[RMDB]
RNA sequence: GGGAACGACUCGAGUAGAGUCGAAAAGAUAGGGGGUUCGCCCCCUAUCAAAGGUGCAAUGUACUUUCUGCACCAAAGACGGAAAAACCGUCUAAGUACAAAAAACGAUGGCGUUCGCGCCAUCGAAUCACAAGUUAUCGUUCGCGAUAACUUGUGAAAAAGAAACAACAACAACAAC
Reactivity to DMS in 0.01 (KOAc 150mM, MgCl2 10mM, bicine 150mM(pH8.5), 24C), signal-to-noise 1, nucleotides 027 to 126: g000a010u040a000g010g000g030g110g040u000u010c300g000c000c000c000c000c040u020a010u000c000a050a090a110g020g010u000g010c020a080a140u000g040u000a000c020u000u000u000c170u010g010c000a010c000c040a050a140a030g030a010c000g000g000a100a210a060a160a180c000c000g000u000c000u000a030a050g010u000a000c010a010a090a090a020a090a100c000g040a010u000g000g000c000g020u000u010c180g040c000g020c000c000a000u000c000g000a090a070
Reactivity to 2A3 in 0.01 (KOAc 150mM, MgCl2 10mM, bicine 150mM(pH8.5), 24C), signal-to-noise 1, nucleotides 027 to 126: g010a000u020a000g020g000g030g000g000u020u000c050g090c000c000c020c000c000u010a000u000c010a020a010a000g000g000u000g000c020a100a260u180g020u010a030c000u070u140u130c110u030g010c000a000c000c000a000a000a000g000a000c000g000g060a220a100a030a050a100c000c000g020u010c000u000a030a010g030u030a030c000a020a130a000a020a090a000c020g000a000u010g030g000c080g000u070u050c300g000c000g020c090c000a010u000c000g010a010a020